[RMDB]
RNA sequence: GGGAACGACUCGAGUAGAGUCGAAAAUAUCAAAAGCGGCGAUGAAGAUUGUGAAGUACCACUCCCGGACUUUCAGUCUUGGUGAUGUGAAUUUGAAAGUGACUACCAAACUUGAGGCUGUUAGAGAAGUCCAAAAUAUCUUCGGAUAUUUUGGACUAAAAGAAACAACAACAACAAC
Reactivity to DMS in 0.01 (KOAc 150mM, MgCl2 10mM, bicine 150mM(pH8.5), 24C), signal-to-noise 1, nucleotides 027 to 126: u050a090u010c070a060a040a170a120g010c100g000g040c060g010a100u000g000a020a040g000a060u000u010g040u000g020a060a050g000u010a030c080c000a020c020u030c040c010c030g000g000a050c010u000u000u030c150a040g020u000c000u010u000g100g010u010g000a020u050g000u000g000a120a080u010u010u000g010a110a060a170g000u010g030a000c020u000a130c050c030a010a030a050c010u000u000g020a120g000g000c030u000g030u010u010a110g000a230g000a030